[RMDB]
The record gives the reactivity of an RNA of 207 nucleotides to 2A3 and DMS. The reactions ran in a buffer of 150 mM KOAc, 10 mM MgCl2 and 150 mM bicine (pH 8.5), at 24 C. The data come from the RNA Mapping Database (RMDB), library OK3TST. The DMS profile rests on 2,822 reads.
RNA sequence: GGGAACGACUCGAGUAGAGUCGAAAACUCUUUGUGCAUGAACUCAUUUAAUCCUUCAAGCUGUGUACUAUUAUAUUUUCAACAGUCAAGAAUGGAAGUUGAAAUUGGCUAGAGAGAGGAGUCUUGAAUUCAGCUCUCUCUAACCAAGGGAGAAGCACAUUAUCACCUCGUUCGCGAGGUGAUAAUGAAAAGAAACAACAACAACAAC
Reactivity to 2A3 in 0.01 (KOAc 150mM, MgCl2 10mM, bicine 150mM(pH8.5), 24C), signal-to-noise 4, nucleotides 027 to 156: c010u030c000u060u110u110g060u040g020c090a160u090g030a100a050c010u020c070a050u030u140u200a060a050u070c030c010u030u030c050a050a040g010c000u000g020u030g010u120a090c070u060a050u300u070a180u050a130u180u110u060u120c030a070a030c000a000g070u090c010a070a140g010a060a020u160g000g000a020a040g040u020u070g070a110a120a150u010u010g000g000c010u000a000g000a010g010a020g000a010g050g010a030g030u020c070u260u300g120a200a090u130u050c050a190g030c020u000c000u010c000u000c010u000a000a010c000c010a000a000g030g070g000a100g040a020a050g020c070a000
Reactivity to DMS in 0.01 (KOAc 150mM, MgCl2 10mM, bicine 150mM(pH8.5), 24C), signal-to-noise 2, nucleotides 027 to 156: c010u000c060u000u000u010g000u010g020c050a130u000g010a150a080c040u030c050a190u000u000u000a080a120u000c020c020u010u000c010a130a300g020c020u000g010u000g000u000a070c060u000a090u000u000a180u010a170u020u000u000u000c020a040a030c020a020g000u010c060a100a250g010a040a070u000g000g020a000a110g030u000u000g000a090a040a130u000u000g000g000c020u000a050g020a030g040a090g020a030g040g010a060g000u030c020u030u010g010a140a110u000u000c040a080g010c000u010c000u000c000u000c000u000a000a020c010c000a030a060g030g010g020a100g000a090a100g080c020a190